[RMDB]
RNA sequence: GGGAACGACUCGAGUAGAGUCGAAAACGCCAGCGAUUCGUCGCUGGCGAAAUAAAUUCAGCGGUUUAAAUUUCGUCCGCAUAACCGGUGAUGCGGACGAAAAAAGGCAGUUGUUCGCAACUGCCAAGACUUAAUUAAAGUUCGCUUUAAUUAAGUCAAAAGAAACAACAACAACAAC
Reactivity to DMS in 0.01 (KOAc 150mM, MgCl2 10mM, bicine 150mM(pH8.5), 24C), signal-to-noise 3, nucleotides 027 to 126: c030g040c000c000a000g020c010g010a040u000u010c130g030u000c000g040c020u010g000g000c000g000a010a030a030u000a070a070a100u000u000c040a040g020c080g010g000u010u000u010a060a110a170u000u000u000c000g010u000c000c000g000c000a000u000a070a080c050c050g000g010u010g000a030u000g010c000g000g010a010c000g000a000a000a010a070a050a060g000g010c000a010g010u000u000g010u000u010c130g010c000a010a000c000u000g010c000c010a030a030
Reactivity to 2A3 in 0.01 (KOAc 150mM, MgCl2 10mM, bicine 150mM(pH8.5), 24C), signal-to-noise 3, nucleotides 027 to 126: c020g000c000c000a000g000c010g010a040u060u060c130g030u020c000g130c010u010g030g000c020g000a000a000a000u010a000a030a030u150u110c030a040g080c060g150g060u090u140u210a050a150a090u070u100u010c010g000u000c000c000g020c020a000u020a040a060c020c060g140g050u110g020a000u010g000c010g000g010a010c000g000a000a000a000a000a000a000g000g000c000a000g000u000u020g010u030u080c170g020c100a000a000c000u010g000c000c000a000a000
The record gives the reactivity of an RNA of 177 nucleotides to DMS and 2A3. Source: RMDB library M2PK50, as collected in RNAgym. The RNA was probed in 150 mM KOAc, 10 mM MgCl2 and 150 mM bicine (pH 8.5) at 24 C. For 2A3, 5,195 sequencing reads were counted. The DMS profile rests on 4,120 reads.